[RMDB]
The record gives the reactivity of an RNA of 177 nucleotides to 2A3 and DMS. The data come from the RNA Mapping Database (RMDB), libraries RFM100 and RFMREP. Conditions: 150 mM KOAc, 10 mM MgCl2 and 150 mM bicine (pH 8.5), 24 C. Values cover nucleotides 27 to 126. DMS adducts were read by reverse transcription with MarathonRT. Values are in units of 0.01, from 0 to 300, in steps of 10.
RNA sequence: GGGAACGACUCGAGUAGAGUCGAAAACCCGUCCGAUGCCCGCGGGUAGGCCGCUAGAGCCUGUCGGCGACGGCAGGCCCAGAUGGAUGGUCGCCCAUCGUCCGCCGCGAGGCGGGCGUGGAUAGAACAUCAUCUCUAUGUUCGCAUAGAGAUGAUGAAAAGAAACAACAACAACAAC
Reactivity to 2A3 in 0.01 (KOAc 150mM, MgCl2 10mM, bicine 150mM(pH8.5), 24C), signal-to-noise 9, nucleotides 027 to 126: c000c000c000g020u020c010c030g050a060u120g040c020c010c010g040c060g010g000g010u070a240g130g010c000c000g010c040u050a030g010a020g060c000c000u000g010u010c010g020g020c050g020a090c000g010g000c000a010g000g000c000c010c010a120g020a100u180g040g060a090u080g030g010u020c010g020c000c000c010a040u070c010g010u010c010c020g010c010c010g020c040g020a040g020g000c000g000g000g000c010g000u010g000g020a070u050a100g100a030a030
Reactivity to DMS in 0.01 (KOAc 150mM, MgCl2 10mM, bicine 150mM(pH8.5), 24C), signal-to-noise 8, nucleotides 027 to 126: c010c000c010g000u020c030c030g010a100u020g010c040c030c060g010c090g000g010g000u010a060g030g010c020c020g020c040u010a090g000a140g000c010c000u000g000u010c000g000g010c290g000a190c020g010g000c000a020g000g020c010c020c050a090g000a150u050g010g010a080u010g010g020u010c030g000c070c000c010a070u020c010g010u000c020c020g020c010c010g010c260g000a150g000g020c000g000g000g000c000g030u010g000g000a070u020a080g000a120a220